[RMDB]
The record gives the reactivity of an RNA of 177 nucleotides to DMS and 2A3. 2A3 adducts were read by reverse transcription with SuperScript II with manganese. Values are in units of 0.01, from 0 to 300, in steps of 10. DMS adducts were read by reverse transcription with MarathonRT.
RNA sequence: GGGAACGACUCGAGUAGAGUCGAAAAUGACCAAGAAGCAGAGCGAAGAAGCCAUCAGCUCCAUGCUCGAGUGCGUGGUCAGCGCUCUGCAAAGCGGCAAGAGCGUCGGCCUGCCCGGCCUCGGCACGAAAGAAAGAGCAUUCGUGCUCUUUCUUUCAAAAGAAACAACAACAACAAC
Reactivity to DMS in 0.01 (KOAc 150mM, MgCl2 10mM, bicine 150mM(pH8.5), 24C), signal-to-noise 7, nucleotides 027 to 126: u000g000a250c010c020a120a110g000a180a170g020c020a020g000a020g010c000g020a070a080g000a140a170g010c020c020a050u010c170a290g010c010u000c020c070a110u010g020c160u000c130g000a040g020u000g010c230g020u000g000g010u010c060a140g010c010g010c000u000c000u000g020c020a020a030a090g010c180g000g010c050a050a070g000a020g010c120g030u000c030g000g010c040c090u000g010c110c020c020g000g000c010c000u000c030g010g010c060a100c220
Reactivity to 2A3 in 0.01 (KOAc 150mM, MgCl2 10mM, bicine 150mM(pH8.5), 24C), signal-to-noise 5, nucleotides 027 to 126: u100g040a030c000c010a020a040g120a090a020g000c000a000g020a010g010c010g010a080a040g050a100a010g220c000c020a040u050c040a020g030c010u020c040c020a160u220g030c090u110c100g020a020g020u040g010c060g000u020g000g020u050c000a000g030c010g000c000u000c000u010g010c010a010a030a050g050c060g060g020c040a150a090g000a010g010c070g010u010c010g010g020c010c110u140g010c020c000c000g010g000c000c010u000c000g010g000c020a010c130